[RMDB]
RNA sequence: GGGAACGACUCGAGUAGAGUCGAAAAGCUGCCUUACUUUGUAGCUGAGAUAACAGAAUUUGGCCACAGAGUGAUUUACUUGACUGAUCUAUUUAUGGCAACUUGUUUAUGUAUUUUUAAAUCACAGUUACAAUGAGCUAUUGUUCACGUGUAUACAAAAAUCCCAAAAUUUCGAUUUUGGGAUUUUAAAAGAAACAACAACAACAAC
Reactivity to 2A3 in 0.01 (KOAc 150mM, MgCl2 10mM, bicine 150mM(pH8.5), 24C), signal-to-noise 2, nucleotides 027 to 156: g000c070u090g050c010c000u080u040a020c000u050u020u050g000u020a000g000c020u030g030a030g010a080u090a120a000c030a060g070a120a120u050u070u100g090g000c000c000a020c030a000g030a020g010u030g040a060u020u070u120a030c030u100u100g170a090c030u030g020a040u020c010u050a140u040u080u040a030u050g020g010c000a020a070c020u090u030g030u030u160u020a090u090g010u030a080u040u150u030u010u230a010a160a020u070c060a010c000a010g000u000u010a000c010a010a040u020g020a020g010c010u070a030u020u090g000u030u030c080a090c140g060u040g220u120a020u300a050c040a020
Reactivity to DMS in 0.01 (KOAc 150mM, MgCl2 10mM, bicine 150mM(pH8.5), 24C), signal-to-noise 3, nucleotides 027 to 156: g000c050u000g020c040c030u000u010a110c060u000u000u010g050u000a040g000c010u000g010a110g020a130u000a130a250c060a130g010a030a100u010u010u010g010g030c000c000a030c020a050g010a060g020u000g010a040u000u010u000a030c060u000u010g010a180c040u000g020a050u010c030u000a240u010u010u000a050u010g010g040c000a030a030c060u000u000g010u000u010u000a070u020g010u000a060u010u000u010u020u000a040a120a120u000c040a140c020a050g020u000u000a020c020a070a050u000g010a130g040c020u000a090u000u000g000u000u010c030a080c130g050u000g010u000a170u010a090c050a040